[RMDB]
RNA sequence: GGGAACGACUCGAGUAGAGUCGAAAAGAACCACGUCGACUUAGGAUGGAGACUCGAAUCCAACGACUGCCACCUGCAACUUAGCCAGCUCGAAAAACAGCUCAAACUCACAGCCGAAAUCCACGAAACAGCAACCGGACUCAAAGUCCUACUCGGCCACCUAGAUAUCGUUCGCGAUAUCUAGGUGAAAAGAAACAACAACAACAAC
Reactivity to 2A3 in 0.01 (KOAc 150mM, MgCl2 10mM, bicine 150mM(pH8.5), 24C), signal-to-noise 5, nucleotides 027 to 156: g040a020a020c030c010a040c050g060u050c010g030a080c060u080u160a100g030g010a040u050g050g030a060g030a060c040u020c090g040a050a040u050c050c020a080a050c050g040a030c010u060g050c010c020a030c020c030u050g020c030a070a090c090u040u050a050g050c010c010a010g010c020u050c060g050a080a050a040a010a030c020a010g010c010u020c090a050a060a060c040u030c030a050c040a030g010c010c000g020a060a030a010u040c050c020a060c050g070a060a100a050c020a030g060c020a020a040c030c040g040g020a030c010u020c140a090a090a000g010u020c000c000u020a040c030u020c020g020g000c010
Reactivity to DMS in 0.01 (KOAc 150mM, MgCl2 10mM, bicine 150mM(pH8.5), 24C), signal-to-noise 2, nucleotides 027 to 156: g010a150a150c060c020a090c110g030u000c010g020a070c030u020u020a080g020g010a050u010g030g020a250g010a090c030u010c060g000a080a070u000c020c040a040a100c040g000a070c070u000g000c060c000a040c000c020u000g030c020a100a090c070u000u010a110g010c050c000a050g000c000u000c040g000a080a040a080a110a130c040a050g000c000u010c050a040a070a110c040u000c080a070c080a080g000c000c040g030a020a100a080u000c020c030a100c050g020a100a060a040c050a100g020c030a100a070c080c010g000g020a060c020u010c050a070a120a090g010u000c000c000u000a080c020u000c060g000g000c120
This 207-nucleotide RNA was probed chemically with 2A3 and DMS. It was measured as part of the RMDB library OK3TST. Values cover nucleotides 27 to 156. The DMS profile rests on 2,660 reads. The 2A3 profile rests on 3,564 reads. The reactions ran in a buffer of 150 mM KOAc, 10 mM MgCl2 and 150 mM bicine (pH 8.5), at 24 C.